[RMDB]
RNA sequence: GGGAACGACUCGAGUAGAGUCGAAAAGAAAGAAAGAAAGAAUCAGUGUUCUUUGGUUUUUGUGGAACAGCUCCUGUGAAUUUUAUAAGACCAUGAGUUGUCCCACAAAGAACACAGAUCGCUGUAAAACUGUGGAGCGAUUCGUCGCUCCACAGUUAAAAGAAACAACAACAACAAC
Reactivity to 2A3 in 0.01 (KOAc 150mM, MgCl2 10mM, bicine 150mM(pH8.5), 24C), signal-to-noise 1, nucleotides 027 to 126: g050a020a040a000g160a060a020a000g100a110a090a020g060a080a060u060c010a010g000u010g050u080u000c000u060u010u000g030g040u000u000u000u010u010g010u000g000g000a000a000c000a000g000c000u030c000c040u040g010u030g070a110a100u020u000u050u120a300u110a190a000g130a110c040c000a030u000g000a000g000u000u000g010u040c000c000c000a000c000a000a000a000g010a000a010c000a000c000a010g000a000u000c000g000c000u000g000u040a120a000